Structure probing data (2A3) for a 177-nucleotide construct.
RNA sequence: GGGAACGACUCGAGUAGAGUCGAAAACUUUGUCAUUUAUUUAAUGUUAAUGAUACCCAUUGCCAACCUAGGACUAAGUUCAGUAUUAACAAAAAAUAUUUACAUACCUAAAUUUUUAACGGAAGAAAUCUUAGCACCCUUUCGAGGGUGCUAAGAUAAAAGAAACAACAACAACAAC
Reactivity to 2A3 in 0.01 (KOAc 150mM, MgCl2 10mM, bicine 150mM(pH8.5), 24C), signal-to-noise 1, nucleotides 027 to 126: c080u120u030u000g010u000c060a000u010u050u010a000u040u090u030a150a070u080g000u010u010a000a000u060g060a010u060a150c010c000c080a010u090u080g030c000c010a050a040c060c050u070a050g030g010a000c060u090a050a010g010u010u070c000a040g010u020a040u080u000a130a090c010a000a140a000a000a000a000u030a050u030u120u050a010c000a010u070a070c000c010u210a150a250a300u100u140u000u080u180a090a070c000g040g000a050a070g100a090a270